[RMDB]
RNA sequence: GGGAACGACUCGAGUAGAGUCGAAAAGGGCUGUGGAGGAAAAUUAACUUAUGCCUCGGUUUGAACGAAAAUGGUUAAACUUUAGGAGCAAACUGAAAGUACGUUGUUCCACCAUUGAGGCUAUAGGGUAAGUCUAAGGGUUCGCCCUUAGACUUACAAAAGAAACAACAACAACAAC
Reactivity to DMS in 0.01 (KOAc 150mM, MgCl2 10mM, bicine 150mM(pH8.5), 24C), signal-to-noise 2, nucleotides 027 to 126: g030g000g020c040u000g040u000g000g010a100g020g000a050a050a050a110u010u000a120a150c030u000u000a060u030g000c020c020u000c000g010g000u020u010u010g020a060a050c130g020a110a110a040a040u000g000g010u010u000a030a060a100c110u000u020u000a090g010g000a070g010c030a040a030a020c040u000g000a090a060a180g000u000a060c170g010u000u000g020u000u000c040c050a100c060c060a050u020u000g040a000g000g010c000u000a110u000a030g000g010
Reactivity to 2A3 in 0.01 (KOAc 150mM, MgCl2 10mM, bicine 150mM(pH8.5), 24C), signal-to-noise 1, nucleotides 027 to 126: g050g030g020c100u040g020u080g050g060a070g000g060a030a050a070a080u190u090a120a020c010u000u000a010u070g020c000c000u010c020g040g000u070u010u190g070a050a020c000g030a030a040a060a060u080g010g070u100u100a040a070a060c030u080u120u100a130g010g040a010g040c020a080a150a020c020u090g020a050a040a050g150u120a010c140g020u020u020g020u030u000c000c010a000c000c010a040u000u060g010a000g000g040c060u050a030u060a090g070g000